Structure probing data (DMS) for a 177-nucleotide construct.
RNA sequence: GGGAACGACUCGAGUAGAGUCGAAAAGAUCAGGGCCUGGCCGAAAUCGCCGGUUUCCGGAUCGAUGACGAUGACGUAAUGGCCACGGGUGUCGGCGAAGUAAUCAGAUUUCUUGUCGCUUACCGAACAGAUGGAGGCAUUUCGAUGCCUCCAUCUGAAAAGAAACAACAACAACAAC
Reactivity to DMS in 0.01 (KOAc 150mM, MgCl2 10mM, bicine 150mM(pH8.5), 24C), signal-to-noise 1, nucleotides 027 to 126: g010a080u010c060a110g000g030g040c110c000u000g010g060c080c050g030a040a210a050u000c100g020c020c000g000g000u000u000u000c080c050g010g000a030u000c030g000a110u000g020a170c060g020a090u000g000a210c080g010u000a120a090u030g010g010c010c000a060c090g010g000g010u010g000u010c020g000g000c020g000a080a050g000u000a010a080u010c120a040g000a300u000u010u000c020u000u000g000u000c020g000c090u000u000a130c010c010g030a080a220
Overview: Source: RMDB library OK2TST, as collected in RNAgym.